[RMDB]
RNA sequence: GGGAACGACUCGAGUAGAGUCGAAAAACGUUGAUAUGGAUUUACUCCGAGGAGACGAACUACCACGAACAGGGGACACUCUACCCGUGGCGUCUCCGUUUGACGAGUAAGUCCUAGGUCAACAUGCGAGCCUGACUCUUCGGAGUCAGGAAAAGAAACAACAACAACAAC
Reactivity to DMS in 0.01 (KOAc 150mM, MgCl2 10mM, bicine 150mM(pH8.5), 24C), signal-to-noise 1, nucleotides 027 to 129: a010c090g000u020u020g020a030u010a130u070g020g020a030u020u010u000a020c020u010c000c000g020a020g000g000a000g030a050c000g000a000a000c100u050a300c040c010a000c000g000a070a270c190a060g040g020g020g000a050c300a120c090u040c030u040a160c170c060c000g000u000g030g010c030g030u050c050u010c020c010g010u050u040u050g030a000c300g010a030g010u020a000a020g020u040c010c000u000a010g040g020u000c000a000a000c000a050u000g020c120g010a090g030
Reactivity to 2A3 in 0.01 (KOAc 150mM, MgCl2 10mM, bicine 150mM(pH8.5), 24C), signal-to-noise 5, nucleotides 027 to 129: a000c110g000u010u000g000a010u000a020u110g000g010a000u000u000u000a010c000u000c000c010g010a060g000g000a000g020a000c000g030a090a030c100u190a090c080c000a000c010g040a070a030c050a100g040g000g000g090a030c100a070c180u090c030u040a060c000c030c000g000u000g000g010c000g000u000c000u010c000c000g000u060u040u100g010a020c020g000a000g000u000a000a000g000u000c000c000u000a000g020g040u000c000a000a000c000a040u140g060c050g080a050g030
The record gives the reactivity of an RNA of 170 nucleotides to DMS and 2A3. DMS adducts were read by reverse transcription with MarathonRT. The reactions ran in a buffer of 150 mM KOAc, 10 mM MgCl2 and 150 mM bicine (pH 8.5), at 24 C. Values cover nucleotides 27 to 129. 2A3 adducts were read by reverse transcription with SuperScript II with manganese. For 2A3, 20,902 sequencing reads were counted.